Background:
The record gives the reactivity of an RNA of 177 nucleotides to DMS and 2A3. For 2A3 the reverse transcriptase was SuperScript II with manganese. 2A3 is a SHAPE reagent: it acylates the 2'-hydroxyl of flexible nucleotides of all four kinds. The RNA was probed in 150 mM KOAc, 10 mM MgCl2 and 150 mM bicine (pH 8.5) at 24 C. For DMS, 1,332 sequencing reads were counted.
[RMDB]
RNA sequence: GGGAACGACUCGAGUAGAGUCGAAAAGAGGAGACCUUAGGGGAGACCGAAGCGAGGAGGAAAGCAAAGAAAGCAACGGGGCUAGCCGGUGGGUGUUCCUCCCCCCGAGAGGGGAAGAGUGAGGCUUACAUCACAUAAUCUUCGGAUUAUGUGAUGUAAAAGAAACAACAACAACAAC
Reactivity to DMS in 0.01 (KOAc 150mM, MgCl2 10mM, bicine 150mM(pH8.5), 24C), signal-to-noise 2, nucleotides 027 to 126: g000a060g000g000a080g000a090c070c040u000u000a150g000g000g030g000a170g000a060c020c020g020a110a210g000c070g000a080g000g020a140g000g010a080a030a080g030c100a050a090a130g000a070a060a170g000c020a050a170c060g030g030g000g000c040u000a100g010c040c040g000g040u010g010g010g000u000g000u000u010c020c010u000c000c020c020c020c010c020g000a130g000a100g010g010g000g010a010a030g010a100g000u000g010a050g010g000c210u000u000
Reactivity to 2A3 in 0.01 (KOAc 150mM, MgCl2 10mM, bicine 150mM(pH8.5), 24C), signal-to-noise 1, nucleotides 027 to 126: g020a000g030g010a030g020a030c000c000u070u100a120g050g000g000g010a040g020a030c020c020g010a040a020g020c010g010a030g030g060a010g000g090a130a070a010g030c040a090a030a040g060a050a100a000g040c000a000a080c040g010g000g030g090c010u030a010g070c000c020g050g020u070g000g010g020u010g070u010u010c000c000u010c020c000c000c000c000c010g070a080g020a040g000g010g000g000a020a040g030a010g010u100g040a030g000g040c000u000u000